[RMDB]
About this RNA
The data come from the RNA Mapping Database (RMDB), library OK3TST. The record gives the reactivity of an RNA of 207 nucleotides to 2A3 and DMS. The DMS profile rests on 3,018 reads. 2A3 adducts were read by reverse transcription with SuperScript II with manganese. The reactions ran in a buffer of 150 mM KOAc, 10 mM MgCl2 and 150 mM bicine (pH 8.5), at 24 C.
RNA sequence: GGGAACGACUCGAGUAGAGUCGAAAAUAACAUAGACGGGGGUCUCACCAUGUUGGUCAGGUUGGUCUCGAACUCCUGACCUCAUGAUUCACUGGCCUCGGCCUCCCAAAGUGCUGGGAUUACAAGCGUGAGCCACCGUGCCCAGCCCCAAGGGAAAAUUAUUUAGGUACUUCGGUACCUAAAUAAUAAAAGAAACAACAACAACAAC
Reactivity to 2A3 in 0.01 (KOAc 150mM, MgCl2 10mM, bicine 150mM(pH8.5), 24C), signal-to-noise 2, nucleotides 027 to 156: u090a040a010c040a040u200a020g040a040c070g010g000g000g000g000u080c010u010c050a030c020c000a010u050g020u080u060g070g000u000c000a000g030g070u260u250g080g030u120c080u050c150g030a040a010c040u020c040c000u000g000a000c000c000u000c000a000u000g010a000u100u040c000a010c130u080g020g010c010c000u000c030g000g000c000c020u060c040c070c060a040a160a020g100u090g010c020u000g020g040g010a030u110u190a070c040a170a060g020c030g030u040g030a000g000c010c000a020c040c030g000u020g010c010c000c000a010g050c020c020c000c020a000a040g020g000g000a010a110a010
Reactivity to DMS in 0.01 (KOAc 150mM, MgCl2 10mM, bicine 150mM(pH8.5), 24C), signal-to-noise 1, nucleotides 027 to 156: u010a080a170c080a090u000a040g000a050c020g020g030g030g080g010u010c010u000c030a000c020c000a030u000g000u010u000g010g010u000c040a030g010g050u000u020g010g020u010c040u030c160g020a070a070c010u000c010c000u010g000a020c010c000u000c000a010u000g000a080u000u000c060a070c050u000g010g020c040c000u000c080g040g010c000c030u010c030c020c030a070a080a100g030u000g030c010u010g020g030g000a130u010u000a040c070a050a030g010c000g030u010g000a100g010c030c040a030c050c030g040u000g000c000c000c040a080g010c040c010c020c050a070a250g010g000g010a070a050a100